Chemical mapping of a 207-nucleotide RNA with 2A3 and DMS. For DMS, 3,875 sequencing reads were counted. 2A3 adducts were read by reverse transcription with SuperScript II with manganese. Conditions: 150 mM KOAc, 10 mM MgCl2 and 150 mM bicine (pH 8.5), 24 C. For 2A3, 2,183 sequencing reads were counted.

RNA sequence: GGGAACGACUCGAGUAGAGUCGAAAACAAAAGUGCAGUCUGCUCUGUUUUAAACCCUGAGUAUUUGGAAAGUGAAACAUGAGUGGCAGUAGGCAUGUAUUGGUGAGGUAUGAUCAUUGAACAUCUGUAUGUUCAAAGAGGAUAAAACAGAUAACUACCUAUUACUACGGUUCGCCGUAGUAAUAGGAAAAGAAACAACAACAACAAC
Reactivity to 2A3 in 0.01 (KOAc 150mM, MgCl2 10mM, bicine 150mM(pH8.5), 24C), signal-to-noise 4, nucleotides 027 to 156: c020a010a100a020a020g070u080g010c030a010g030u030c000u010g000c000u010c010u040g040u000u010u020u040a110a100a070c020c000c000u050g090a130g180u210a240u170u190u100g010g010a130a080a010g060u040g010a010a030a020c020a070u190g000a010g000u030g010g020c020a010g050u080a020g040g000c040a020u050g000u110a080u080u090g030g020u090g020a030g030g030u070a040u140g100a030u090c060a070u060u010g010a000a010c000a030u030c040u100g190u300a040u080g030u050u030c020a010a030a030g120a030g070g000a030u150a090a070a020a010c050a030g050a080u200a100a050c050u180a020
Reactivity to DMS in 0.01 (KOAc 150mM, MgCl2 10mM, bicine 150mM(pH8.5), 24C), signal-to-noise 2, nucleotides 027 to 156: c040a070a130a070a140g010u000g040c010a090g010u000c040u010g020c020u000c060u000g010u000u000u000u020a040a110a150c030c040c020u010g020a110g010u000a070u000u000u010g020g010a130a050a100g040u000g000a120a040a040c040a080u000g020a100g020u000g020g000c040a120g030u000a080g020g000c000a060u000g000u000a100u000u010g020g010u000g020a110g050g010u000a090u020g010a090u000c040a240u000u000g020a000a040c010a020u000c120u000g030u000a060u000g020u000u000c020a020a060a100g010a020g020g020a160u000a040a050a050a110c010a040g010a110u000a070a080c060u000a140